[RMDB]
RNA sequence: GGGAACGACUCGAGUAGAGUCGAAAAUGGUGUGUGAAAUACCGACACGAUGUUCUAAUUGGACAAGUAGAUACUGAUGUUAAAGAGCUACUACAAAAAAUUGCUAUUGACAACGAUGUACAAAUCGUUGAGAUGGAAUCUGACAAAGACCAUAUCCUAAGUCUCCAAGAUUCGUCUUGGAGACUUAAAAAGAAACAACAACAACAAC
Reactivity to 2A3 in 0.01 (KOAc 150mM, MgCl2 10mM, bicine 150mM(pH8.5), 24C), signal-to-noise 5, nucleotides 027 to 156: u050g000g000u010g000u000g010u030g090a100a080a020u140a080c060c030g020a010c010a010c060g080a090u060g020u030u010c040u090a180a180u100u240g020g000a000c020a050a010g020u010a020g050a070u080a170c030u090g110a130u100g040u120u090a120a130a020g050a010g010c030u070a040c000u030a020c090a020a100a000a040a030a030u100u130g020c010u070a030u100u170g070a070c000a010a010c010g000a000u040g070u190a060c060a050a130a010u010c000g000u000u020g010a020g000a040u050g020g030a040a070u040c030u050g050a030c040a060a070a010g020a010c000c000a020u040a030u140c010c020
Reactivity to DMS in 0.01 (KOAc 150mM, MgCl2 10mM, bicine 150mM(pH8.5), 24C), signal-to-noise 3, nucleotides 027 to 156: u000g000g030u000g000u000g000u000g000a100a150a110u000a050c030c000g030a080c040a150c080g020a140u000g010u000u010c050u010a080a170u010u000g000g020a030c020a060a100g010u010a070g000a140u000a140c050u010g000a150u000g020u000u010a060a140a130g010a110g040c080u000a050c050u000a210c040a010a030a070a080a110a090u000u000g010c030u000a110u000u000g020a100c000a000a010c000g020a020u000g040u000a160c200a110a100a060u000c000g010u000u000g000a170g000a070u010g010g010a050a150u000c060u010g000a110c080a080a080a060g000a130c030c020a040u000a110u000c080c100